[RMDB]
RNA sequence: GGGAACGACUCGAGUAGAGUCGAAAAGGCUAUGAUCGGGGCGUGAUCGGCGAAGAACUGCAAGAGAAACGGAGUCUCGGGGGCGUUGGCGAACAGGUUCUUCAGCACCACCACGAAGCUGGGAUGCUGAACUAGUUAGAUUCGUCUAACUAGUUCAAAAAGAAACAACAACAACAAC
Reactivity to 2A3 in 0.01 (KOAc 150mM, MgCl2 10mM, bicine 150mM(pH8.5), 24C), signal-to-noise 9, nucleotides 027 to 126: g040g010c040u060a050u170g040a070u080c040g010g010g020g000c020g020u030g020a090u070c030g020g010c040g040a060a030g030a090a070c040u090g010c080a110a030g040a010g050a140a100a020c060g050g020a050g040u020c030u030c060g020g000g000g000g000c030g020u030u050g040g010c020g010a050a020c020a050g050g000u050u030c000u060u040c010a010g000c010a010c020c010a050c010c000a050c050g060a060a020g020c050u020g010g020g020a040u060g020c040
Reactivity to DMS in 0.01 (KOAc 150mM, MgCl2 10mM, bicine 150mM(pH8.5), 24C), signal-to-noise 9, nucleotides 027 to 126: g010g010c040u010a060u020g010a070u010c050g010g010g000g010c050g020u010g000a070u010c060g010g010c040g010a090a060g010a070a090c060u010g010c070a090a100g010a110g010a070a080a090c100g010g000a100g010u010c040u010c060g000g010g000g000g010c060g010u010u000g000g020c050g010a060a070c130a090g000g010u000u000c040u000u010c040a060g000c030a060c040c040a130c040c020a060c080g000a070a090g010c070u000g000g000g000a080u010g010c070